[RMDB]
An RNA of 177 nucleotides, treated with 2A3 and DMS and read out base by base. For 2A3, 6,486 sequencing reads were counted. Source: RMDB library M2PK50, as collected in RNAgym. Reactivities are given for positions 27 through 126. The RNA was probed in 150 mM KOAc, 10 mM MgCl2 and 150 mM bicine (pH 8.5) at 24 C. For DMS, 5,410 sequencing reads were counted.
RNA sequence: GGGAACGACUCGAGUAGAGUCGAAAAUUUACGGUAUUCGUACCGUAAACGAGCAAGCAAGCAGCGCAACGAGACAAGACGAUAAUAAGAUGGAGCAUGCUGAUAGUAGGAUCUUCGGAUCCUACAAGAAUAAGUGGCAUUUCGAUGCCACUUAUUCAAAAGAAACAACAACAACAAC
Reactivity to 2A3 in 0.01 (KOAc 150mM, MgCl2 10mM, bicine 150mM(pH8.5), 24C), signal-to-noise 4, nucleotides 027 to 126: u010u010u000a000c000g000g000u020a030u030u080c210g030u040a020c010c000g000u010a010a010a010c040g020a030g060c050a090a020g030c010a040a010g000c010a000g020c030g010c060a040a000c060g030a010g040a070c040a060a030g050a040c060g040a060u040a200a050u110a130a110g070a080u100g030g010a030g010c030a030u060g010c010u050g040a070u060a100g000u000a000g010g010a000u010c010u010u050c260g040g000a000u000c000c000u000a000c000a000a010
Reactivity to DMS in 0.01 (KOAc 150mM, MgCl2 10mM, bicine 150mM(pH8.5), 24C), signal-to-noise 5, nucleotides 027 to 126: u000u000u000a000c000g010g000u000a010u000u010c200g030u000a010c000c000g010u000a000a000a030c110g010a110g010c080a050a060g010c060a080a060g010c030a050g010c050g010c040a040a040c060g010a080g000a070c070a060a040g010a060c080g000a070u010a030a060u000a040a070g010a070u010g000g000a100g010c040a040u010g010c060u000g000a080u010a100g000u000a000g000g000a000u000c000u000u010c180g030g000a010u000c000c000u010a000c000a040a070